The data come from the RNA Mapping Database (RMDB), library OK1LIB. Structure probing data (DMS and 2A3) for a 177-nucleotide construct.
[RMDB]
RNA sequence: GGGAACGACUCGAGUAGAGUCGAAAAGCGGAAACGCGAAUACUCUCUAACUCUCUCAAAAUAAAGACCUAGCAUCGAUGAAUGAGAGAGAAAGGAGAGAGUCGAUGCUAGGGGAGUAAAAUAAAAAGGGAAAUGAUAUGUUCGCAUAUCAUUUCCCAAAAGAAACAACAACAACAAC
Reactivity to DMS in 0.01 (KOAc 150mM, MgCl2 10mM, bicine 150mM(pH8.5), 24C), signal-to-noise 2, nucleotides 027 to 126: g000c010g000g020a080a030a280c050g000c000g010a100a010u000a150c010u010c000u030c000u040a130a090c010u000c030u000c000u000c040a080a070a150a120u090a040a040a060g000a090c000c000u000a040g000c000a000u020c000g000a010u000g020a100a080u010g020a020g010a030g000a000g000a010a090a180g050g000a000g000a040g000a070g000u020c000g050a060u000g000c060u020a000g000g000g030g000a210g040u060a120a030a100a030u060a010a090a040a290a160
Reactivity to 2A3 in 0.01 (KOAc 150mM, MgCl2 10mM, bicine 150mM(pH8.5), 24C), signal-to-noise 3, nucleotides 027 to 126: g000c010g010g080a070a040a050c000g010c000g000a010a020u120a090c000u010c020u020c040u050a300a160c000u000c000u000c000u000c010a000a110a000a080u300a080a190a030g120a080c000c000u020a000g010c000a010u000c010g080a050u100g160a250a070u060g000a000g000a000g000a000g050a100a010a000g220g010a040g020a000g000a000g020u020c000g000a000u000g020c000u000a000g000g000g000g000a130g150u210a110a000a080a170u280a040a010a050a000a070
The reactions ran in a buffer of 150 mM KOAc, 10 mM MgCl2 and 150 mM bicine (pH 8.5), at 24 C. For 2A3, 1,952 sequencing reads were counted. For DMS the reverse transcriptase was MarathonRT.